Annotation
Conditions: 150 mM KOAc, 10 mM MgCl2 and 150 mM bicine (pH 8.5), 24 C. An RNA of 177 nucleotides, treated with DMS and 2A3 and read out base by base. For 2A3 the reverse transcriptase was SuperScript II with manganese. DMS adducts were read by reverse transcription with MarathonRT. As a SHAPE reagent, 2A3 marks flexible, mostly unpaired nucleotides at the ribose 2'-OH. Reactivities are rounded to 0.1 and cut off at 0 and 3.
[RMDB]
RNA sequence: GGGAACGACUCGAGUAGAGUCGAAAAGAUAUGGAACUGCUCAGGGAGAACCUCACUCGGAAACGAGUGCCCGGUUCAUCGAUCUGAGGCAGUUCCUAAGUCAAAGGACUUGCUUCGGCAAGUCCAACGUCAAUUAUUGGUUCGCCAAUAAUUGACGAAAAGAAACAACAACAACAAC
Reactivity to DMS in 0.01 (KOAc 150mM, MgCl2 10mM, bicine 150mM(pH8.5), 24C), signal-to-noise 5, nucleotides 027 to 126: g000a040u000a300u000g000g000a000a010c010u000g010c000u000c000a010g010g000g010a040g000a010a020c010c010u010c000a010c000u000c010g020g000a070a110a210c010g010a020g010u000g000c300c230c300g010g000u000u000c020a240u000c210g000a050u000c000u000g010a080g010g020c010a020g030u000u010c000c000u000a000a100g010u000c040a070a120a120g000g010a030c000u000u000g000c000u000u020c220g020g010c020a000a010g000u010c000c000a010a020
Reactivity to 2A3 in 0.01 (KOAc 150mM, MgCl2 10mM, bicine 150mM(pH8.5), 24C), signal-to-noise 4, nucleotides 027 to 126: g020a000u060a030u140g000g000a000a010c000u010g000c010u010c020a010g020g020g010a110g000a030a010c010c020u110c040a010c000u000c010g040g020a090a070a040c000g010a010g000u020g010c040c060c020g000g010u010u010c070a180u300c030g060a050u020c010u010g030a080g120g010c000a010g010u010u000c000c000u000a010a010g010u010c040a070a130a240g000g010a010c000u000u010g010c010u080u160c300g110g000c000a010a000g000u020c000c000a000a000